[RMDB]
RNA sequence: GGGAACGACUCGAGUAGAGUCGAAAAUACUGGGCUGAACUAAAAGAUGUAUUUGAACUAUUUGAUGUUGAAAUGCCUAUCGUGAUGCCAAGGCUUAGAAUUACUUAUUUAAAUGACCGUAUAGAAACAUCAGUAUGUGGUUCGCCACAUACUGAUGAAAAGAAACAACAACAACAAC
Reactivity to 2A3 in 0.01 (KOAc 150mM, MgCl2 10mM, bicine 150mM(pH8.5), 24C), signal-to-noise 3, nucleotides 027 to 126: u070a020c020u050g040g000g010c030u040g030a060a020c010u050a020a030a140a000g040a030u080g020u030a020u020u030u020g060a010a000c010u030a110u180u250u300g130a100u160g000u030u010g040a000a000a040u000g030c010c020u030a030u010c030g030u040g030a020u070g030c000c040a010a040g040g000c030u050u030a020g020a050a080u110u040a060c040u070u130a130u240u150u110a110a210a060u070g030a050c000c000g040u070a070u020a220g170a060a110a000
Reactivity to DMS in 0.01 (KOAc 150mM, MgCl2 10mM, bicine 150mM(pH8.5), 24C), signal-to-noise 1, nucleotides 027 to 126: u000a060c040u010g010g010g020c000u000g000a160a100c050u010a070a080a120a090g010a080u010g010u000a020u000u000u010g020a050a030c040u000a180u020u010u010g000a100u010g000u000u000g000a020a020a020u000g010c000c150u010a070u010c140g010u000g000a120u000g000c020c060a070a140g000g000c050u000u000a030g010a100a040u010u010a080c130u000u010a100u010u010u010a060a060a140u000g000a110c060c060g000u000a100u010a080g000a100a070a140
An RNA of 177 nucleotides, treated with 2A3 and DMS and read out base by base.
The reactions ran in a buffer of 150 mM KOAc, 10 mM MgCl2 and 150 mM bicine (pH 8.5), at 24 C.
For DMS, 2,669 sequencing reads were counted.